[RMDB]
RNA sequence: GGGAACGACUCGAGUAGAGUCGAAAACGAUCAGUACGUUCGCGUACUGAUCGAAGCUACUGGAGACAGUAGCAAGUCUAAGACCUUGUUAGGCGGAAACAAGGAAAAAUGGAGGAAGGCCCAACCUCCAUACUUAGACAACCGCCAAUGGGCCAACCGUAAAUUACUCAUUCGUGAGUAAUUUACGAAAAGAAACAACAACAACAAC
Reactivity to 2A3 in 0.01 (KOAc 150mM, MgCl2 10mM, bicine 150mM(pH8.5), 24C), signal-to-noise 6, nucleotides 027 to 156: c010g000a000u000c000a000g000u000a000c010g030u030u090c230g010c010g100u010a000c000u000g000a000u000c000g000a000a000g000c000u000a000c000u000g020g020a050g010a030c000a000g000u000a000g000c000a010a020g000u000c000u000a010a030g010a170c000c000u010u010g020u020u040a130g040g140c090g050g060a050a030a000c000a000a010g030g000a050a110a050a020a020u030g000g000a010g030g010a100a190g020g000c010c000c000a070a150c020c010u000c000c000a000u000a000c000u000u000a010g000a010c020a050a070c100c060g130c080c030a030a050u030g000g000g000c000c000a010a010c060
Reactivity to DMS in 0.01 (KOAc 150mM, MgCl2 10mM, bicine 150mM(pH8.5), 24C), signal-to-noise 2, nucleotides 027 to 156: c020g000a010u000c010a030g010u000a010c010g030u000u010c300g010c040g050u000a010c000u020g000a000u000c000g000a000a080g010c000u000a000c010u000g000g010a300g000a300c000a040g000u000a020g000c000a060a060g030u000c020u010a050a040g040a300c010c010u000u000g020u000u000a080g040g050c060g090g000a300a120a020c010a010a040g020g000a000a040a150a140a100u000g020g040a000g000g020a070a040g000g010c010c000c010a050a140c010c010u010c000c010a020u000a020c070u000u000a010g000a050c000a070a180c170c090g000c090c010a100a110u000g030g050g040c000c010a150a160c150